RNA sequence: GGGAACGACUCGAGUAGAGUCGAAAAGAUAUGGAAGCCUGUAGGGAGAUACGGAUCGGAAACGAUCCGAAUAUCAUCGAUCUACCGGCUUCCUAAGUCAAAAGCCAUGUUGUUCGCAACAUGGCAAGUUAGAACCAAAGUUCGCUUUGGUUCUAACAAAAGAAACAACAACAACAAC
Reactivity to 2A3 in 0.01 (KOAc 150mM, MgCl2 10mM, bicine 150mM(pH8.5), 24C), signal-to-noise 2, nucleotides 027 to 126: g010a010u030a010u120g000g000a020a000g010c030c020u040g010u010a010g040g110g080a300g020a040u020a040c010g000g000a000u010c000g010g000a030a020a010c000g000a020u000c000c000g000a030a040u040a000u010c040a020u280c090g110a060u000c010u000a000c010c010g010g000c000u000u000c000c000u000a000a000g010u000c000a050a040a240a000g000c000c000a000u010g030u020u020g080u040u100c300g000c280a000a000c010a010u000g000g000c000a010a000
Reactivity to DMS in 0.01 (KOAc 150mM, MgCl2 10mM, bicine 150mM(pH8.5), 24C), signal-to-noise 4, nucleotides 027 to 126: g000a030u010a240u010g000g000a020a040g010c000c010u000g020u000a010g020g010g020a300g010a030u010a120c010g010g000a010u010c010g020g000a070a030a110c010g010a010u010c000c000g000a040a050u000a050u010c090a190u000c190g000a290u010c010u000a000c000c160g010g000c000u010u000c000c000u020a000a070g000u000c020a090a090a130a180g000c000c000a010u000g010u000u000g030u000u010c270g030c000a010a000c000a010u000g000g010c010a000a020